This 207-nucleotide RNA was probed chemically with DMS and 2A3.

[RMDB]
RNA sequence: GGGAACGACUCGAGUAGAGUCGAAAAAAUCUAAGAGCGUCAUAAACGCAGACUGGUCCCUGGAUUUGUUUACUAGAAAGGGAUAAGAUGUUUUGUAAACUGGUUGAUAUAUGGGUUGUUAUUUGUCCGCUAUAUCAAUGAGAAUAAAUCAGAUGACGAAUAGGAUAAACUUCGGUUUAUCCUAUUCAAAAGAAACAACAACAACAAC
Reactivity to DMS in 0.01 (KOAc 150mM, MgCl2 10mM, bicine 150mM(pH8.5), 24C), signal-to-noise 3, nucleotides 027 to 156: a060a080u010c050u010a090a110g010a200g020c030g020u000c050a140u010a100a100a070c040g010c000a140g000a100c080u010g050g020u000c000c000c000u000g000g010a300u000u000u010g010u000u000u000a100c060u000a110g000a260a150a050g000g000g010a050u000a040a100g010a090u000g010u000u010u010u010g000u000a060a060a100c000u000g020g060u000u000g010a030u000a020u000a040u010g020g000g030u010u000g010u000u000a130u000u000u000g020u000c020c040g000c100u010a060u000a030u000c030a030a050u000g010a210g000a080a100u010a030a070a090u020c030a060g010a070u000g010a110c190
Reactivity to 2A3 in 0.01 (KOAc 150mM, MgCl2 10mM, bicine 150mM(pH8.5), 24C), signal-to-noise 3, nucleotides 027 to 156: a010a000u140c070u100a090a010g030a030g090c010g010u020c040a160u130a260a210a010c010g000c010a010g030a030c010u020g050g010u010c030c000c000u000g020g000a010u070u090u220g030u030u040u030a020c020u030a050g070a010a060a000g000g000g020a000u020a070a070g050a040u090g100u090u150u100u150g040u050a060a020a010c020u030g050g000u000u020g000a000u000a000u000a020u030g050g010g000u060u030g050u100u070a090u160u040u070g040u000c000c010g010c050u000a000u000a000u050c000a000a010u020g020a000g000a050a080u100a170a050a030u080c010a020g020a110u040g010a020c070
The DMS profile rests on 5,457 reads. For 2A3 the reverse transcriptase was SuperScript II with manganese. The reactions ran in a buffer of 150 mM KOAc, 10 mM MgCl2 and 150 mM bicine (pH 8.5), at 24 C.